[RMDB]
RNA sequence: GGGAACGACUCGAGUAGAGUCGAAAAAUCAACGCCAAUAAUAACUGGCAAAUCUAACAAUAACUUCGCUUUAGCUGCAUAAUAGUAGCUUAGCGUUCCUCCCUCCAUCGCCCAUGUGGUAGGGUAAGGGACUCACUUUAAGUGGGCUACGCCGGAGGUGGAUCGUGUUGUUCGCAACACGAUCCACAAAAGAAACAACAACAACAAC
Reactivity to 2A3 in 0.01 (KOAc 150mM, MgCl2 10mM, bicine 150mM(pH8.5), 24C), signal-to-noise 1, nucleotides 027 to 156: a000u140c140a130a050c150g000c000c020a010a020u150a200a000u120a030a000c100u020g000g020c040a000a220a000u130c120u160a010a040c100a200a040u150a130a090c130u080u070c040g110c000u260u070u230a000g000c000u000g000c020a000u030a090a030u040a300g010u060a000g000c000u010u010a000g000c000g020u060u080c000c000u010c060c000c000u000c020c000a000u000c050g020c000c000c000a000u000g000u020g000g000u030a010g000g010g000u040a040a030g080g000g050a060c070u060c110a010c010u030u090u300a110a000g000u010g000g000g000c020u060a070c110g060c060c000g000g000a000g080

Overview:
This 207-nucleotide RNA was probed chemically with 2A3.